[RMDB]
RNA sequence: GGGAACGACUCGAGUAGAGUCGAAAACGGCUUCUCCUGGGCGAUCGCUCGCUGUUUUUGUGGCUGGCUUUCAGCGGGCUGGAGGAGCCGGGAGCGGAGGCGGAGGACCGAGCCAAAAACGUCAGCCUAUAGAGGAAGCUGUUCGCAGCUUCCUCAACAUCCUCACUCGAUUCGUCGAGUGAGGAUGAAAAGAAACAACAACAACAAC
Reactivity to 2A3 in 0.01 (KOAc 150mM, MgCl2 10mM, bicine 150mM(pH8.5), 24C), signal-to-noise 1, nucleotides 027 to 156: c000g010g010c020u010u000c000u010c000c010u070g140g120g010c070g100a120u140c070g010c000u000c010g020c010u000g060u030u020u000u060u150g110u070g010g010c050u010g000g040c010u000u020u010c000a010g000c010g000g000g020c030u020g000g000a000g000g000a020g000c000c000g010g010g000a000g000c030g020g080a030g000g030c070g010g070a030g010g000a030c000c000g000a050g090c020c090a030a040a020a020a000c080g040u030c010a000g000c020c000u100a150u130a130g000a000g000g000a000a000g010c000u010g040u160u130c250g000c080a000g040c000u000u010c000c000u000c000a000a000
This 207-nucleotide RNA was probed chemically with 2A3.
Reactivities are given for positions 27 through 156.
The RNA was probed in 150 mM KOAc, 10 mM MgCl2 and 150 mM bicine (pH 8.5) at 24 C.
2A3 adducts were read by reverse transcription with SuperScript II with manganese.
The data come from the RNA Mapping Database (RMDB), library M2RFPK.